This 177-nucleotide RNA was probed chemically with DMS and 2A3. The reactions ran in a buffer of 150 mM KOAc, 10 mM MgCl2 and 150 mM bicine (pH 8.5), at 24 C. For 2A3 the reverse transcriptase was SuperScript II with manganese. Values are in units of 0.01, from 0 to 300, in steps of 10.
RNA sequence: GGGAACGACUCGAGUAGAGUCGAAAAGCAGUACGGUUCGCCGUACUGCAAAGGCACAUGCAAAUCCGGUGGGAAACCAUAAACGGAAAGCCAAGCAUGAAAAAACAGGGACCUUCGGGUCCCUGAACCUAAUAGGUGAGUUCGCUCACCUAUUAGGAAAAGAAACAACAACAACAAC
Reactivity to DMS in 0.01 (KOAc 150mM, MgCl2 10mM, bicine 150mM(pH8.5), 24C), signal-to-noise 4, nucleotides 027 to 126: g000c000a000g010u000a000c010g010g000u000u020c190g030c000c000g000u000a010c000u000g030c010a010a030a050g000g030c020a180c060a020u000g010c020a010a120a170u000c000c000g040g000u010g010g010g000a150a090a180c000c010a040u000a050a080a280c010g010g000a010a020a080g000c010c020a060a300g000c000a010u000g010a000a080a040a050a110a190c000a000g020g010g010a020c000c000u000u020c140g040g010g000u000c010c000c000u000g000a010a050
Reactivity to 2A3 in 0.01 (KOAc 150mM, MgCl2 10mM, bicine 150mM(pH8.5), 24C), signal-to-noise 4, nucleotides 027 to 126: g010c000a000g000u010a000c010g030g050u030u130c230g030c080c000g000u000a000c000u000g000c010a000a000a000g030g000c060a060c010a170u040g000c000a010a000a030u000c010c000g010g010u010g010g000g020a030a050a060c010c000a020u070a060a300a040c000g000g000a010a010a000g000c000c010a020a000g000c000a010u060g030a050a170a010a000a000a000c020a010g000g000g000a000c000c000u070u160c260g090g020g000u000c010c000c000u000g000a000a000